[RMDB]
RNA sequence: GGGAACGACUCGAGUAGAGUCGAAAAUCUUAACGAUGUUCUUCGCAGAUGAUGAUUCAUUUUUUAAGUAUUUGGCUAGUCAAGAUGAUGAAUCUUCAUUAUCUGAUAUAUUGCAAAUCACUCAAUAUCUAGACUUUCUGUUAUUAUUAUUGAUCCACAAUGCCUUCGUAUUCGUACGAAGGCAUUGAAAAGAAACAACAACAACAAC
Reactivity to 2A3 in 0.01 (KOAc 150mM, MgCl2 10mM, bicine 150mM(pH8.5), 24C), signal-to-noise 7, nucleotides 027 to 156: u020c010u020u040a020a010c030g030a030u050g050u130u020c030u090u080c070g000c070a030g010a080u060g000a020u020g020a030u040u050c040a070u010u020u020u050u100u160a170a060g040u090a170u090u110u120g120g010c060u080a040g070u110c060a070a050g030a080u080g000a000u000g010a030a070u040c000u080u020c060a020u010u050a020u030c010u010g010a000u010a010u010a020u120u090g040c040a050a120a100u100c030a070c060u040c010a000a060u010a040u090c060u060a030g030a070c020u070u120u020c040u140g040u050u040a060u050u010a030u070u030a080u080u150g070a050u060c000c060a020
Reactivity to DMS in 0.01 (KOAc 150mM, MgCl2 10mM, bicine 150mM(pH8.5), 24C), signal-to-noise 3, nucleotides 027 to 156: u000c020u000u000a040a100c160g010a040u010g000u000u000c040u010u010c050g030c030a210g000a160u010g010a040u000g010a110u000u000c020a010u000u010u000u000u000u020a010a140g010u000a090u010u010u000g020g020c030u000a100g030u000c080a050a100g010a020u000g010a020u000g030a040a220u000c160u000u000c010a020u000u000a020u000c020u000g000a130u010a110u000a080u000u000g000c070a070a070a120u000c110a090c070u010c020a000a070u000a060u000c050u000a070g010a060c040u000u000u000c020u000g020u000u000a050u000u000a010u000u000a040u000u010g000a300u000c000c040a260
This 207-nucleotide RNA was probed chemically with 2A3 and DMS. For 2A3 the reverse transcriptase was SuperScript II with manganese. It was measured as part of the RMDB library OK3TST. DMS adducts were read by reverse transcription with MarathonRT. The DMS profile rests on 6,750 reads.